[RMDB]
RNA sequence: GGGAACGACUCGAGUAGAGUCGAAAAGUUAGGUGAGGUGGCUACACGAACAUAGGCCACUGACCCCGAACGUCGAGAGACGCCCCGGGUCAGGACAGCUCUUCCCGGCUUAAGGGUUGAGCCCAGGUAUCACCCUGGCUAUUCGUAGCCAGGGUAAGUAUCUACAAGUAUUCGUACUUGUAGAUACAAAAGAAACAACAACAACAAC
Reactivity to 2A3 in 0.01 (KOAc 150mM, MgCl2 10mM, bicine 150mM(pH8.5), 24C), signal-to-noise 3, nucleotides 027 to 156: g080u110u090a060g060g060u040g040a070g000g040u020g020g010c000u070a020c070a040c120g140a180a010c060a110u150a060g050g000c000c020a020c010u000g000a000c010c000c000c000g010a050a020c000g000u020c010g000a030g000a000g000a140c010g030c010c030c010c020g030g000g000u020c010a010g030g050a050c050a040g010c000u000c010u020u010c020c000c000g040g000c090u120u190a100a140g030g000g000u010u020g000a010g020c010c010c000a050g030g070u110a080u200c050a030c000c000c000u000g010g010c000u010a010u020u110c180g090u040a000g010c000c000a000g000g000g000u010a000a000
Reactivity to DMS in 0.01 (KOAc 150mM, MgCl2 10mM, bicine 150mM(pH8.5), 24C), signal-to-noise 2, nucleotides 027 to 156: g010u000u010a080g040g010u010g000a120g020g020u000g010g070c030u000a130c070a150c070g010a070a100c110a170u000a080g040g010c010c000a150c010u000g000a050c070c000c000c040g000a050a040c030g020u000c000g010a300g000a300g000a020c020g020c000c020c020c160g010g000g020u010c030a020g000g020a100c020a050g030c020u000c030u000u000c010c010c010g020g050c100u010u000a050a130g010g020g020u010u020g010a080g020c000c000c030a130g010g010u000a100u000c090a060c000c010c000u000g000g030c000u000a040u000u010c260g030u000a040g010c000c000a000g010g030g000u000a020a010